[RMDB]
RNA sequence: GGGAACGACUCGAGUAGAGUCGAAAAGAUAUGGACUGCAGGUAUCAAAUCCGUGUCGGAAACGACACGUGAUUGACCACGCCUGACAGUCCUAAGUCAAAUCGGAGGCAGUUCGCUGCCUCCGAAAGAUAUACUAGUUGUUCGCAACUAGUAUAUCAAAAGAAACAACAACAACAAC
Reactivity to 2A3 in 0.01 (KOAc 150mM, MgCl2 10mM, bicine 150mM(pH8.5), 24C), signal-to-noise 7, nucleotides 027 to 126: g010a000u010a000u050g000g010a000c000u000g000c010a000g000g030u080a110u300c190a130a080a010u000c000c010g000u000g000u000c000g000g000a030a010a000c000g000a000c000a010c010g040u080g000a000u010u010g000a010c060c060a070c110g010c010c000u100g080a230c000a000g000u000c000c000u000a000a000g000u000c010a010a040a260u070c000g000g010a000g000g000c000a000g010u070u190c300g130c180u000g000c000c000u000c000c000g000a000a000a000
Reactivity to DMS in 0.01 (KOAc 150mM, MgCl2 10mM, bicine 150mM(pH8.5), 24C), signal-to-noise 8, nucleotides 027 to 126: g000a010u000a050u000g000g010a020c000u000g010c000a000g000g010u000a090u010c160a060a030a010u000c000c000g020u000g000u000c000g010g000a030a020a050c000g010a010c000a000c000g010u010g010a010u000u000g010a130c300c260a080c230g000c000c000u000g010a170c010a010g010u000c000c000u000a000a060g000u000c000a080a140a170u000c000g000g000a020g000g010c000a010g020u000u020c290g010c000u000g010c000c000u000c000c000g000a000a010a060